[RMDB]
RNA sequence: GGGAACGACUCGAGUAGAGUCGAAAAGAUAUGGAGUAAGACGCGACGUAACAUCCUUCGGAAACGAAGGUGGUCGAACUACGUUAUCUCCUAAGUCAAAACAUCGCAAAGUUCGCUUUGCGAUGAACAGUUAUCCAUUCUUCGGAAUGGAUAACUGAAAAGAAACAACAACAACAAC
Reactivity to DMS in 0.01 (KOAc 150mM, MgCl2 10mM, bicine 150mM(pH8.5), 24C), signal-to-noise 5, nucleotides 027 to 126: g010a030u000a300u000g000g000a000g010u010a130a180g010a020c020g010c010g000a010c010g000u000a010a050c120a030u010c000c000u010u000c000g010g000a130a050a200c000g000a000a000g000g000u000g010g010u000c000g000a070a060c110u020a270c010g000u000u000a240u010c010u000c000c000u000a050a110g010u000c000a070a090a100a220c000a000u000c000g010c000a010a020a010g000u000u010c270g010c010u000u010u000g000c010g000a010u000g010a040a130
Reactivity to 2A3 in 0.01 (KOAc 150mM, MgCl2 10mM, bicine 150mM(pH8.5), 24C), signal-to-noise 4, nucleotides 027 to 126: g020a010u050a060u140g020g000a000g030u120a300a150g080a050c020g000c000g030a010c020g010u050a040a030c030a300u300c010c000u000u000c000g000g030a060a050a030c010g000a010a010g000g000u000g000g000u010c010g010a070a070c100u160a050c160g000u010u020a090u060c010u000c000c010u050a210a010g030u010c010a020a010a050a140c010a000u010c000g000c000a000a010a010g010u050u130c180g040c200u000u000u000g000c000g000a000u000g000a010a000

This 177-nucleotide RNA was probed chemically with DMS and 2A3. The reactions ran in a buffer of 150 mM KOAc, 10 mM MgCl2 and 150 mM bicine (pH 8.5), at 24 C. The 2A3 profile rests on 9,965 reads. For DMS the reverse transcriptase was MarathonRT. 2A3 is a SHAPE reagent: it acylates the 2'-hydroxyl of flexible nucleotides of all four kinds. Reactivities are rounded to 0.1 and cut off at 0 and 3. The data come from the RNA Mapping Database (RMDB), library TTRDEL.